Source: RMDB library OK1LIB, as collected in RNAgym. Chemical mapping of a 177-nucleotide RNA with 2A3.
[RMDB]
RNA sequence: GGGAACGACUCGAGUAGAGUCGAAAAUUGAGGUUGCACUCAGGCUCCAGGAAUACGCAGCAACCCUCGAAGGCAGAGAACAGCUUGCAGUUAAAGCCUAUGCCGAAGCUCUUGAAAUCAUUCCGAGGCGUGACCGAUGUUUCGACAUCGGUCACGCAAAAGAAACAACAACAACAAC
Reactivity to 2A3 in 0.01 (KOAc 150mM, MgCl2 10mM, bicine 150mM(pH8.5), 24C), signal-to-noise 1, nucleotides 027 to 126: u090u020g070a090g060g200u100u040g010c000a000c000u180c020a010g140g000c040u090c030c000a030g060g000a080a020u220a080c030g020c040a130g000c000a000a000c010c050c000u000c040g030a100a150g140g000c000a020g000a040g000a110a080c000a040g000c000u000u140g170c120a140g100u080u300a000a030a000g000c000c000u000a030u000g060c000c000g030a010a010g050c000u000c000u000u030g130a030a020a020u180c120a050u090u040c010c000g090a150g030
2A3 adducts were read by reverse transcription with SuperScript II with manganese. The RNA was probed in 150 mM KOAc, 10 mM MgCl2 and 150 mM bicine (pH 8.5) at 24 C.